[RMDB]
RNA sequence: GGGAACGACUCGAGUAGAGUCGAAAACUCGCGCGAACAUUGAGGCGUGGAGCGCGACAUGAAUCAGCCUCGAUUAGAUUAAUGGUCGACAGAUCAGCGGCGAUCAGCGACCCAAUUAGAAGCCGCUACCGGAAGAGGAGACGCUCGACGGACGUCAAGCUAUGAGCAGUUUCGACUGCUCAUAGCUAAAAGAAACAACAACAACAAC
Reactivity to 2A3 in 0.01 (KOAc 150mM, MgCl2 10mM, bicine 150mM(pH8.5), 24C), signal-to-noise 1, nucleotides 027 to 156: c050u000c000g000c000g000c000g020a270a000c000a020u000u060g010a020g000g020c010g020u000g000g030a040g020c020g000c010g020a070c040a130u170g050a120a040u150c070a090g000c000c000u000c040g040a060u080u100a050g020a080u030u030a000a070u200g010g000u000c020g000a050c060a090g100a040u000c100a020g000c000g000g000c000g030a040u030c030a020g030c000g030a060c060c100c000a000a030u080u100a070g020a230a020g000c000c000g000c020u030a090c040c070g030g030a090a000g000a020g070g000a110g000a020c020g060c020u000c070g040a000c010g000g040a010c000g040u050c070a080